[RMDB]
RNA sequence: GGGAACGACUCGAGUAGAGUCGAAAAUAGCUCCCCAUGAUUUCUUCAUCUUUGAUGUAGACAAAGUUAAAACACCUCAUAUUGUACGUCAGCGUUUAACUGAGUACACUAUGAUGGAUCUUGUAUAUAAGCGUGUCGUUCGCGACACGCAAAAGAAACAACAACAACAAC
Reactivity to 2A3 in 0.01 (KOAc 150mM, MgCl2 10mM, bicine 150mM(pH8.5), 24C), signal-to-noise 3, nucleotides 027 to 129: u090a070g050c090u050c000c000c000c000a070u020g080a120u000u020u010c010u020u020c000a100u010c170u060u080u300g020a020u040g000u010a000g000a030c050a050a110a000g050u120u130a050a150a010a040c210a050c000c040u000c000a000u000a030u040u000g000u000a000c030g260u010c030a000g010c040g000u030u030u240a010a020c050u010g000a020g000u000a010c000a020c000u000a010u030g000a060u120g010g000a000u020c050u080u080g110u000a030u070a000u030a070a090
Reactivity to DMS in 0.01 (KOAc 150mM, MgCl2 10mM, bicine 150mM(pH8.5), 24C), signal-to-noise 2, nucleotides 027 to 129: u180a080g020c130u040c030c000c030c080a110u050g010a120u040u040u040c000u000u000c050a040u040c010u000u000u000g000a030u020g010u020a100g050a050c260a160a020a010g030u050u010a030a140a000a140c220a060c010c030u000c000a040u020a060u000u090g010u010a030c000g120u070c020a000g020c070g010u110u040u130a090a300c030u030g000a050g020u040a000c020a030c070u050a000u000g000a050u070g000g030a090u000c080u010u010g060u140a100u030a120u000a160a130
Source: RMDB library 15KLIB, as collected in RNAgym. This 170-nucleotide RNA was probed chemically with 2A3 and DMS. The 2A3 profile rests on 3,912 reads. For DMS, 4,304 sequencing reads were counted. 2A3 is a SHAPE reagent: it acylates the 2'-hydroxyl of flexible nucleotides of all four kinds. Conditions: 150 mM KOAc, 10 mM MgCl2 and 150 mM bicine (pH 8.5), 24 C.